[RMDB]
RNA sequence: GGGAACGACUCGAGUAGAGUCGAAAACACAUGACCCCCCUGAUGCAGGCCUCCUACAUCGUGGACACCCGGGUGAACCGGGAACUGAACUCGCAUGACACGGCUGAAUACUCCAGCUCGGAUGAAGAGGAUUACUAUUAGGUAAGUAUGGGCGUGGUCAUGGACACAGAUUCGUCUGUGUCCAUGAAAAAGAAACAACAACAACAAC
Reactivity to 2A3 in 0.01 (KOAc 150mM, MgCl2 10mM, bicine 150mM(pH8.5), 24C), signal-to-noise 1, nucleotides 027 to 156: c230a060c090a220u300g250a300c000c000c000c000c060c020u020g000a030u000g030c170a040g000g170c030c000u010c000c000u070a060c080a080u020c000g000u010g000g000a030c030a000c040c000c000g000g000g000u140g070a130a040c000c000g000g000g040a140a000c010u000g010a000a000c000u000c000g060c040a030u040g010a020c000a000c100g000g050c030u070g000a090a040u120a230c010u000c000c000a030g040c030u120c270g000g160a080u090g020a030a000g020a010g030g000a000u040u060a100c020u000a040u080u000a030g060g000u030a060a040g010u040a090u170g000g000g000c000g030u000g000g060
Reactivity to DMS in 0.01 (KOAc 150mM, MgCl2 10mM, bicine 150mM(pH8.5), 24C), signal-to-noise 1, nucleotides 027 to 156: c060a080c130a080u000g020a200c040c000c010c260c010c000u000g030a020u020g000c030a060g020g000c090c010u000c020c020u000a110c040a030u000c020g030u010g010g030a130c010a210c000c010c000g000g000g060u000g000a080a190c010c000g000g000g000a030a070c060u000g010a070a060c050u010c080g040c080a090u000g000a210c020a090c020g020g000c030u030g000a090a100u010a050c050u000c010c010a080g010c010u000c090g050g010a040u000g000a090a090g000a050g020g010a090u010u000a000c060u000a160u000u000a060g010g010u000a040a080g020u000a090u000g010g010g030c050g010u000g010g010
Notes: The data come from the RNA Mapping Database (RMDB), library OK3TST. Chemical mapping of a 207-nucleotide RNA with 2A3 and DMS. The 2A3 profile rests on 506 reads.